Conditions: 150 mM KOAc, 10 mM MgCl2 and 150 mM bicine (pH 8.5), 24 C. Chemical mapping of a 207-nucleotide RNA with 2A3 and DMS. Reactivities are rounded to 0.1 and cut off at 0 and 3. 2A3 adducts were read by reverse transcription with SuperScript II with manganese. For DMS the reverse transcriptase was MarathonRT.
RNA sequence: GGGAACGACUCGAGUAGAGUCGAAAAGUAUACCGUGGCCAAUCGCGCAACGUACACCGCGGUAUAUAUGUCGAUGUUGGUAUGUCAUAUACAUGACGCGCAUACCGUGAUACUGCAGCCAGCUAUAUGCAAUUAGCGUUAUGGCAUGUACGUUGCAUGGCAUUCAAUAUUUCGAUAUUGAAUGCCAAAAAGAAACAACAACAACAAC
Reactivity to 2A3 in 0.01 (KOAc 150mM, MgCl2 10mM, bicine 150mM(pH8.5), 24C), signal-to-noise 5, nucleotides 027 to 156: g020u000a010u010a020c000c000g000u020g030g000c030c060a060a070u110c170g010c020g000c240a010a000c010g000u000a000c030a010c010c010g000c000g000g040u000a010u000a000u000a000u020g180u030c080g060a100u160g050u150u180g050g000u060a060u050g020u050c050a040u120a020u030a250c150a130u130g070a020c040g030c020g000c040a000u020a040c030c000g010u040g040a070u110a200c080u120g050c020a030g020c040c000a010g010c040u080a040u010a010u280g120c060a060a190u090u060a070g010c010g040u120u080a060u080g010g020c010a010u040g000u000a000c010g000u000u000g000c010a010
Reactivity to DMS in 0.01 (KOAc 150mM, MgCl2 10mM, bicine 150mM(pH8.5), 24C), signal-to-noise 5, nucleotides 027 to 156: g020u000a040u000a040c010c000g030u000g020g030c050c070a090a170u010c080g010c100g020c060a040a040c030g020u010a100c070a050c020c010g020c010g000g010u000a000u000a010u010a060u010g030u000c050g020a150u000g030u000u000g010g000u000a060u010g010u000c040a080u000a150u000a070c070a100u000g010a030c000g020c070g000c040a070u000a030c000c020g030u000g020a110u000a040c030u010g000c080a180g020c110c060a180g010c070u000a130u000a050u000g020c060a120a130u000u000a110g040c020g020u000u000a030u000g010g000c040a080u000g010u010a010c010g010u000u000g010c030a260